RNA sequence: GGGAACGACUCGAGUAGAGUCGAAAACUGCAAAGGCACGUGUUGAGUGCUAUGACAGGUUUAAAGUUAAUGAGACAAAUUCUCAAUAUUUGUUUAGUACUAUUAAUGCUCUACCAGAAACUUCUGCCCUCUGUAUUGUCUUCGGACAAUACAGAGGAAAAGAAACAACAACAACAAC
Reactivity to 2A3 in 0.01 (KOAc 150mM, MgCl2 10mM, bicine 150mM(pH8.5), 24C), signal-to-noise 1, nucleotides 027 to 126: c000u000g000c020a040a070a210g040g000c020a000c010g150u200g110u250u200g110a080g020u000g020c000u010a050u120g040a050c030a010g050g000u030u050u080a000a050a000g000u010u150a070a010u100g040a010g000a040c020a050a000a000u120u030c080u010c120a080a100u110a000u100u000u000g010u020u030u000a040g000u030a020c020u020a060u240u020a030a000u050g020c010u020c010u000a070c010c010a000g160a030a090a010c010u020u020c000u040g030c020
Reactivity to DMS in 0.01 (KOAc 150mM, MgCl2 10mM, bicine 150mM(pH8.5), 24C), signal-to-noise 1, nucleotides 027 to 126: c010u000g030c040a030a220a270g000g010c000a000c000g010u000g020u000u020g000a150g010u000g000c020u000a170u000g000a170c000a020g040g000u000u000u000a090a050a080g000u000u000a040a100u000g000a060g000a040c010a030a010a020u000u000c120u020c120a110a090u010a060u000u000u020g000u010u000u000a210g010u000a070c080u020a080u020u020a010a060u000g020c030u000c070u030a120c060c040a230g000a000a130a160c180u000u000c010u000g000c300